[RMDB]
RNA sequence: GGGAACGACUCGAGUAGAGUCGAAAAGAUUAUAUGGAUGUAUCGCCGAAGCAAGUUGUUUCAGCAGCGACAGCAUGUAUUCCAUUCUUAGAAAACGAUGACUCAAACCGUGCAUUGAUGGGUGCGAAUCAGCUCCCCUAUUCGUAGGGGAGCUGAUAAAAGAAACAACAACAACAAC
Reactivity to 2A3 in 0.01 (KOAc 150mM, MgCl2 10mM, bicine 150mM(pH8.5), 24C), signal-to-noise 2, nucleotides 027 to 126: g070a010u040u020a030u090a090u030g090g020a080u090g060u070a070u100c050g000c000c000g030a040a000g040c080a220a110g140u110u080g000u000u150u010c030a000g000c000a000g010c020g020a000c030a000g000c000a000u030g000u000a000u030u000c040c000a030u140u000c000u080u200a130g060a020a000a000a020c060g040a080u100g060a040c000u020c080a030a090a040c060c000g170u110g010c020a040u090u100g100a020u100g060g070g010u000g000c050g020a020
Reactivity to DMS in 0.01 (KOAc 150mM, MgCl2 10mM, bicine 150mM(pH8.5), 24C), signal-to-noise 1, nucleotides 027 to 126: g010a040u030u070a030u010a090u000g000g000a160u010g000u000a130u020c000g070c010c030g000a100a140g000c040a110a190g000u010u010g040u010u000u000c000a100g000c110a020g020c060g000a090c130a020g000c010a000u000g000u010a050u000u010c000c020a080u010u010c020u000u010a060g010a090a030a070a050c100g020a080u040g000a070c110u010c070a070a060a060c070c010g070u000g050c020a080u000u010g000a110u020g000g010g000u000g000c050g000a060